[RMDB]
RNA sequence: GGGAACGACUCGAGUAGAGUCGAAAAGAUAUGGAACAUGAUAGCGAGCAACAGCUAGGAUCGGAAACGAUCCUAGACAUGCUCCUAUAUGUUCCUAAGUCAAAACACAACAUGUUCGCAUGUUGUGGAAAGUUAUUAAGUUCGCUUAAUAACUUUCAAAAGAAACAACAACAACAAC
Reactivity to 2A3 in 0.01 (KOAc 150mM, MgCl2 10mM, bicine 150mM(pH8.5), 24C), signal-to-noise 9, nucleotides 027 to 126: g020a010u080a050u200g000g010a010a010c000a010u180g130a050u300a010g150c200g100a010g000c010a010a190c070a140g050c000u000a010g000g000a000u010c010g010g030a090a040a030c010g000a000u000c000c000u010a000g000a000c000a020u050g000c000u000c000c000u010a010u010a000u010g000u000u000c000c000u000a120a010g020u000c040a040a030a180a090c010a000c000a020a000c000a000u020g030u100u110c300g010c210a000u010g000u000u030g000u030g000
Reactivity to DMS in 0.01 (KOAc 150mM, MgCl2 10mM, bicine 150mM(pH8.5), 24C), signal-to-noise 9, nucleotides 027 to 126: g010a040u010a300u010g000g010a010a000c000a020u010g010a020u000a010g010c240g020a010g010c010a040a090c290a210g010c010u000a000g000g010a010u000c000g000g000a110a080a270c000g010a010u000c000c000u000a000g000a030c100a170u000g000c000u000c000c000u000a010u000a010u000g000u010u000c000c000u000a010a090g010u000c050a080a060a100a300c000a000c000a000a010c000a010u000g010u000u010c300g030c010a010u000g000u000u000g010u000g000